Chemical mapping of a 177-nucleotide RNA with DMS. Values cover nucleotides 27 to 126.
RNA sequence: GGGAACGACUCGAGUAGAGUCGAAAAGAAAGAAAGAAUACUCCCUCCGUCCCGAAAUAACCAAACCUCGUAGGACAUGUCACAUCCUAGUACGAGGUUGGUUUAUUUUGGGACGGAGGGAGUAUAAUGGCUAUUGAAUCUUCGGAUUCAAUAGCCAAAAAGAAACAACAACAACAAC
Reactivity to DMS in 0.01 (KOAc 150mM, MgCl2 10mM, bicine 150mM(pH8.5), 24C), signal-to-noise 1, nucleotides 027 to 126: g000a210a060a090g070a300a160a070g000a300a020u000a010c000u000c060c000c000u000c000c000g020u000c000c000c000g000a050a090a000u000a030a000c000c000a030a080a070c000c000u010c000g010u000a000g000g000a030c060a250u060g000u040c300a070c070a300u000c000c000u020a090g240u010a130c070g000a010g000g050u000u020g010g000u030u000u070a000u000u000u000u030g000g000g000a010c060g020g000a000g120g000g000a000g010u000a000u000a030a070